[RMDB]
RNA sequence: GGGAACGACUCGAGUAGAGUCGAAAAAACGAUUUAUCUAUCUUAGUUGGUGGUGCUGGAUUCACUGGUGUUGAAUUCUUAGGUGAAUUAACAGACAGAAUUCCUGAAUUAUGUAGCAAAUAUGGUGCAUUACACGCGCUUUCGAGCGCGUGUAAUGAAAAGAAACAACAACAACAAC
Reactivity to DMS in 0.01 (KOAc 150mM, MgCl2 10mM, bicine 150mM(pH8.5), 24C), signal-to-noise 1, nucleotides 027 to 126: a000a020c090g000a080u020u020u010a050u020c010u000a060u000c010u000u000a060g000u010u000g000g020u000g000g040u010g060c020u000g010g000a040u020u030c070a030c010u000g010g030u000g010u000u010g010a030a070u000u000c000u000u000a150g000g000u000g000a000a040u000u050a070a080c080a000g020a080c070a020g050a140a060u020u000c000c000u000g020a120a070u010u010a040u010g030u000a030g030c160a060a070a060u030a030u000g000g050u000g000
Reactivity to 2A3 in 0.01 (KOAc 150mM, MgCl2 10mM, bicine 150mM(pH8.5), 24C), signal-to-noise 1, nucleotides 027 to 126: a000a000c070g020a040u130u200u170a100u120c080u050a070u040c000u090u300a130g030u160u210g020g070u000g190g000u000g000c000u000g000g000a000u010u010c000a000c100u150g000g000u030g080u030u120g160a000a030u000u000c030u050u130a300g220g000u020g000a000a010u050u050a030a070c000a000g040a000c000a000g140a080a080u000u000c000c000u000g000a000a000u020u100a110u300g080u000a010g010c000a020a020a020u070a080u150g120g000u020g000